[RMDB]
Overview
Conditions: 150 mM KOAc, 10 mM MgCl2 and 150 mM bicine (pH 8.5), 24 C. An RNA of 207 nucleotides, treated with 2A3 and DMS and read out base by base. For DMS, 2,530 sequencing reads were counted. The 2A3 profile rests on 3,650 reads. It was measured as part of the RMDB library M2RFPK.
RNA sequence: GGGAACGACUCGAGUAGAGUCGAAAAUUGCGCGUGCCUAUUUAGGCAUACUUCUCAGGAUGGCGCGUUGCAGUCCAACAAGAUCCAGGGACUGUACAGAAUUUUCCUAUACCUCGAGUCGGGUUUGAAAACGUUAGGCACUUCGGUGCCUAACGAACGUAUCUAUCCUCUUCGGAGGAUAGAUACGAAAAGAAACAACAACAACAAC
Reactivity to 2A3 in 0.01 (KOAc 150mM, MgCl2 10mM, bicine 150mM(pH8.5), 24C), signal-to-noise 4, nucleotides 027 to 156: u030u050g010c010g000c010g000u030g000c010c010u100a180u190u220u300a040g000g030c020a020u070a040c030u110u080c080u030c120a090g120g040a100u100g060g000c000g000c010g010u020u060g000c010a000g000u000c010c000a060a040c040a170a130g130a210u160c110c050a040g040g000g000a010c010u000g020u020a020c050a050g210a070a010u000u000u000u010c000c000u020a020u030a080c040c050u010c000g000a010g000u000c020g000g040g000u040u050u100g090a050a050a000a000c000g000u000u000a000g000g000c000a000c000u040u050c280g040g000u000g000c000c000u000a000a000c000g000a000a000
Reactivity to DMS in 0.01 (KOAc 150mM, MgCl2 10mM, bicine 150mM(pH8.5), 24C), signal-to-noise 1, nucleotides 027 to 156: u020u000g030c050g050c020g020u000g040c000c000u010a280u000u000u000a050g040g040c000a090u020a030c040u010u020c040u010c140a140g000g000a070u000g000g020c060g020c000g020u030u000g030c000a050g000u010c020c010a090a270c080a070a180g010a110u000c060c040a160g000g010g040a070c030u000g000u010a070c120a060g000a050a070u000u000u000u000c000c000u000a120u000a080c120c000u000c000g020a040g010u000c050g000g050g000u010u010u010g010a070a110a060a140c000g020u000u000a000g000g030c000a010c000u000u020c290g080g010u000g000c000c000u000a000a010c020g050a000a040